Chemical mapping of a 207-nucleotide RNA with 2A3. The reactions ran in a buffer of 150 mM KOAc, 10 mM MgCl2 and 150 mM bicine (pH 8.5), at 24 C. 2A3 adducts were read by reverse transcription with SuperScript II with manganese. The data come from the RNA Mapping Database (RMDB), library OK3TST.
RNA sequence: GGGAACGACUCGAGUAGAGUCGAAAACAGCUCACCUGGUGUGGAGUGGUUUUGCCCUGACAGCAGACUCUGCACACGUGCCUCAGUUCUUCUUGUGUGUUCUUCGCAGGUGACAGUACCAUUUAUCCAGUUAACCAAGCCAGUAUUCAGAGAGUUGCACGGUGUACAGGUUCGCCUGUACACCGUGAAAAGAAACAACAACAACAAC
Reactivity to 2A3 in 0.01 (KOAc 150mM, MgCl2 10mM, bicine 150mM(pH8.5), 24C), signal-to-noise 1, nucleotides 027 to 156: c030a030g040c040u020c000a000c030c030u050g100g000u030g070u030g040g000a000g040u030g050g090u080u010u130u080g060c030c010c050u110g100a060c160a080g000c060a040g070a100c060u070c010u110g080c060a010c000a000c070g040u040g000c010c010u210c010a170g010u300u070c000u090u010c000u070u140g020u000g000u000g010u100u010c000u040u010c040g000c010a010g050g030u040g010a060c000a000g060u080a010c030c040a000u110u050u110a080u070c040c050a030g090u010u060a010a070c040c020a050a030g120c000c010a050g010u010a180u180u190c060a020g020a000g000a010g140u060u090g010